[RMDB]
RNA sequence: GGGAACGACUCGAGUAGAGUCGAAAACGGACCAUCCUCCAGCACGCCUUCCAAAAUUGGCGUUCACUGGAUCGAUUAGCCCCCAGCAAAUUGAAUCGCAGCCCGCAGGAGAUUUGGUUAUUAUCGCCUCAUUUCGUACAAAGAGAAACCGCAACAAAUCGUCCAUUAAUUUCGAUUAAUGGACGAUAAAAGAAACAACAACAACAAC
Reactivity to DMS in 0.01 (KOAc 150mM, MgCl2 10mM, bicine 150mM(pH8.5), 24C), signal-to-noise 2, nucleotides 027 to 156: c050g000g000a040c020c020a180u000c010c020u000c000c000a020g040c030a070c010g010c010c030u000u070c130c110a050a080a120a240u000u000g010g000c000g050u000u000c180a040c000u000g020g000a030u010c030g010a060u000u000a060g020c020c000c010c030c030a160g030c010a080a080a180u000u020g000a070a090u000c050g000c000a090g020c020c050c070g000c070a040g060g020a130g000a060u010u010u000g000g080u000u000a090u000u000a050u000c040g020c020c000u000c050a110u000u000u000c050g000u000a240c040a020a060a100g000a140g020a110a030a080c070c010g020c060a060a070c050a060a140
Reactivity to 2A3 in 0.01 (KOAc 150mM, MgCl2 10mM, bicine 150mM(pH8.5), 24C), signal-to-noise 2, nucleotides 027 to 156: c050g020g020a020c030c040a070u010c010c010u000c000c010a000g000c030a000c000g000c000c000u050u170c180c120a080a120a070a220u130u050g000g000c010g000u020u030c030a010c000u010g000g010a000u060c050g040a040u060u210a070g060c000c000c000c010c010a000g080c050a070a060a110u120u060g040a050a030u110c040g000c020a000g000c000c020c000g010c000a000g040g000a040g000a040u020u040u040g080g000u060u010a080u050u040a070u110c010g000c020c010u050c050a100u040u180u050c010g010u030a000c040a060a160a010g010a020g040a090a060a030c030c040g060c030a000a050c000a020a270